[RMDB]
RNA sequence: GGGAACGACUCGAGUAGAGUCGAAAAAAACUUUUGUGACUUGCUGAAACGGGACUAAUCUCCUCACCGAGGCUAAGCAAGUACAAUACGCCUCUCAUAUCCUUACCUGAGGGUGGUAAGGAAAUAACCUGCAACGCUUCCUUCGGGAAGCGUUGAAUCAGUCAAUUAGGUUCGCCUAAUUGACUGAAAAAGAAACAACAACAACAAC
Reactivity to 2A3 in 0.01 (KOAc 150mM, MgCl2 10mM, bicine 150mM(pH8.5), 24C), signal-to-noise 2, nucleotides 027 to 156: a000a000a000c070u100u090u040u040g030u030g110a050c010u010u000g000c000u050g040a160a090a060c050g000g000g020a010c040u100a080a110u060c060u050c090c010u030c020a070c030c030g020a020g070g000c090u020a030a000g010c000a000a010g000u010a010c010a000a040u120a080c080g030c010c000u050c010u010c010a030u040a080u240c000c000u010u000a000c000c010u060g080a090g020g070g000u050g010g000u010a000a000g010g000a010a030a000u030a000a010c030c090u130g010c010a000a010c000g000c000u000u000c010c000u020u080c240g010g000g000a000a020g000c000g000u000u000g000a000a010
Reactivity to DMS in 0.01 (KOAc 150mM, MgCl2 10mM, bicine 150mM(pH8.5), 24C), signal-to-noise 1, nucleotides 027 to 156: a070a030a070c060u000u000u000u010g030u010g000a000c010u010u000g000c030u010g010a110a060a090c110g000g030g040a140c050u000a100a130u000c020u000c030c000u000c050a140c130c030g010a080g000g000c050u000a150a060g000c020a010a040g020u000a030c050a050a030u000a000c070g000c020c000u030c030u000c070a150u000a110u000c020c000u010u010a040c020c010u000g010a110g020g020g010u010g010g000u010a020a010g000g000a060a050a070u000a050a070c100c020u000g030c000a030a040c000g030c000u000u010c000c050u010u000c290g110g050g020a000a000g000c000g020u000u000g000a030a110

The record gives the reactivity of an RNA of 207 nucleotides to 2A3 and DMS. For 2A3 the reverse transcriptase was SuperScript II with manganese.